This 177-nucleotide RNA was probed chemically with 2A3 and DMS. DMS adducts were read by reverse transcription with MarathonRT. For DMS, 235,063 sequencing reads were counted.
[RMDB]
RNA sequence: GGGAACGACUCGAGUAGAGUCGAAAAGGCUGCAACGUAGUCAUAAGGAACUUAACUGGUCUUGUUGGGUCUUAUGACUAUACGUGGCAUGAGGCAAGACCAGUUUUAUGUUACGUAAUUUGUAGCGCUACAUCUGUCUAUUCGUAGAUAGAUGUAGAAAAGAAACAACAACAACAAC
Reactivity to 2A3 in 0.01 (KOAc 150mM, MgCl2 10mM, bicine 150mM(pH8.5), 24C), signal-to-noise 9, nucleotides 027 to 126: g050g000c000u000g000c010a030a020c030g020u020a010g080u120c010a000u010a020a020g160g030a100a070c060u160u100a050a010c010u060g050g050u050c030u060u060g050u070u110g190g050g040u020c000u030u060a030u040g030a060c000u020a030u020a070c090g080u070g020g000c000a000u030g020a020g030g000c020a040a000g000a040c010c010a010g000u090u060u020u010a010u010g010u000u010a000c010g010u030a070a270u050u060u050g010u010a000g000c000g000
Reactivity to DMS in 0.01 (KOAc 150mM, MgCl2 10mM, bicine 150mM(pH8.5), 24C), signal-to-noise 9, nucleotides 027 to 126: g010g010c000u000g010c010a060a040c240g010u000a010g010u010c010a010u000a020a030g010g010a120a120c260u010u010a040a030c020u000g000g000u000c040u000u000g010u000u010g020g020g010u000c010u000u000a030u000g000a050c020u000a090u010a050c210g020u000g010g010c020a020u000g010a070g000g000c010a030a030g000a040c050c040a020g000u000u000u000u000a010u000g000u000u000a010c000g010u010a080a150u010u000u000g020u000a010g010c010g010